[RMDB]
RNA sequence: GGGAACGACUCGAGUAGAGUCGAAAACAUAAGAAAGACCAAAUACUUUAAGACUUUCAGUAUUUCUUCUAUCGCUGUCUACUACGAACUUCAAAGAGGAACCAGGAGUAGAGGAGGAACAUGAAAGUGAACAGGGAGCAUGACUAUUGAAGCACAAUACGUAAUUUACGUUCGCGUAAAUUACGUAAAAAGAAACAACAACAACAAC
Reactivity to 2A3 in 0.01 (KOAc 150mM, MgCl2 10mM, bicine 150mM(pH8.5), 24C), signal-to-noise 5, nucleotides 027 to 156: c010a040u180a100a060g070a080a030a010g050a040c030c030a050a060a040u090a060c040u150u100u130a100a060g070a090c020u010u060u010c030a010g000u030a050u010u030u010c010u020u000c010u030a070u080c050g010c220u020g060u080c030u070a070c010u050a100c090g110a160a110c050u170u140c160a220a120a050g040a020g020g050a030a030c040c020a020g000g030a050g080u050a010g010a010g000g010a010g000g020a020a020c020a030u040g000a020a020a020g020u030g030a020a010c020a020g000g020g040a020g050c030a030u080g020a050c020u070a060u160u160g060a030a020g010c010a010c020a060a090
Reactivity to DMS in 0.01 (KOAc 150mM, MgCl2 10mM, bicine 150mM(pH8.5), 24C), signal-to-noise 2, nucleotides 027 to 156: c070a170u000a100a130g030a110a080a040g010a150c050c040a050a100a060u010a010c020u000u010u000a000a060g020a160c050u000u010u000c050a050g000u000a020u000u000u000c020u000u020c020u020a130u010c050g000c030u000g030u000c140u010a090c010u010a090c020g030a080a090c050u030u020c040a070a070a120g010a070g000g000a070a100c140c030a100g030g000a030g030u000a060g040a100g000g000a070g040g000a050a040c090a080u000g000a070a040a080g000u000g000a040a090c040a040g010g060g020a060g020c020a030u000g020a080c050u000a030u020u000g010a070a060g010c030a040c020a020a200